[RMDB]
RNA sequence: GGGAACGACUCGAGUAGAGUCGAAAAAAAAUCUAGUGCAAAUAUUGUCUUAAUUACUUAGGCUAAAAGAAAUAAGUAUUAAAUCGGGACAAGGCAUCGACAUUUGAUACAAAUAUUGAUCAAUGGAACAAGAAACACUACUUCGGUAGUGUUUCAACGGACAAUUAAACUUCGGUUUAAUUGUCCGAAAAGAAACAACAACAACAAC
Reactivity to 2A3 in 0.01 (KOAc 150mM, MgCl2 10mM, bicine 150mM(pH8.5), 24C), signal-to-noise 1, nucleotides 027 to 156: a000a000a000a000u100c090u040a040g030u000g050c000a010a290a000u090a070u110u020g000u000c000u010u110a190a170u110u020a060c000u050u000a030g040g090c000u050a300a000a000a000g050a000a090a000u010a020a020g040u000a030u030u080a000a190a090u150c090g070g000g000a020c020a000a000g050g000c000a020u050c050g020a020c000a050u010u000u180g030a030u170a050c060a020a140a010u250a120u220u210g090a000u000c000a000a080u040g020g010a000a070c050a070a150g000a020a020a000c000a000c000u000a000c000u000u000c070g090g000u000a000g010u040g000u000u000u000c000a020a000
Conditions: 150 mM KOAc, 10 mM MgCl2 and 150 mM bicine (pH 8.5), 24 C. Chemical mapping of a 207-nucleotide RNA with 2A3. Values are in units of 0.01, from 0 to 300, in steps of 10. For 2A3, 757 sequencing reads were counted. High 2A3 reactivity points to a flexible backbone, as in loops and unpaired stretches.